An RNA of 177 nucleotides, treated with DMS and 2A3 and read out base by base.

[RMDB]
RNA sequence: GGGAACGACUCGAGUAGAGUCGAAAAUUGGAACAGGACGUCAUAGAGGGUGAGAAUCCCGUCUUUGGCUGCUGGACCGCGCCCAUGCGAAGUUCCUUCGACGAGUCGAGUUGUUUGGGAAUGCAGCAGACCGUGAUAUGUUCGCAUAUCACGGUCUAAAAGAAACAACAACAACAAC
Reactivity to DMS in 0.01 (KOAc 150mM, MgCl2 10mM, bicine 150mM(pH8.5), 24C), signal-to-noise 1, nucleotides 027 to 126: u020u000g000g000a050a160c060a010g020g000a070c150g050u020c020a000u010a080g000a300g000g040g040u000g000a300g000a260a300u000c010c000c040g010u040c030u000u040u000g040g010c050u000g010c020u010g000g000a240c000c000g010c140g060c120c020c000a020u000g020c020g010a110a050g000u000u000c050c000u000u000c050g000a020c050g010a140g010u000c060g000a110g000u000u000g000u000u020u000g000g000g000a080a010u000g010c040a010g000c100
Reactivity to 2A3 in 0.01 (KOAc 150mM, MgCl2 10mM, bicine 150mM(pH8.5), 24C), signal-to-noise 1, nucleotides 027 to 126: u030u130g030g010a020a010c010a020g000g160a050c050g000u000c000a000u000a010g020a000g020g000g020u000g000a050g030a040a050u010c000c000c040g150u000c010u010u000u020g030g000c060u110g010c000u020g070g010a040c000c010g000c030g030c020c000c000a070u140g000c000g020a050a020g000u010u000c000c000u040u050c000g010a040c020g050a070g090u110c010g010a000g000u050u010g030u060u010u030g060g000g020a090a060u060g000c130a030g000c000
It was measured as part of the RMDB library RFM100. Values are in units of 0.01, from 0 to 300, in steps of 10. The 2A3 profile rests on 805 reads.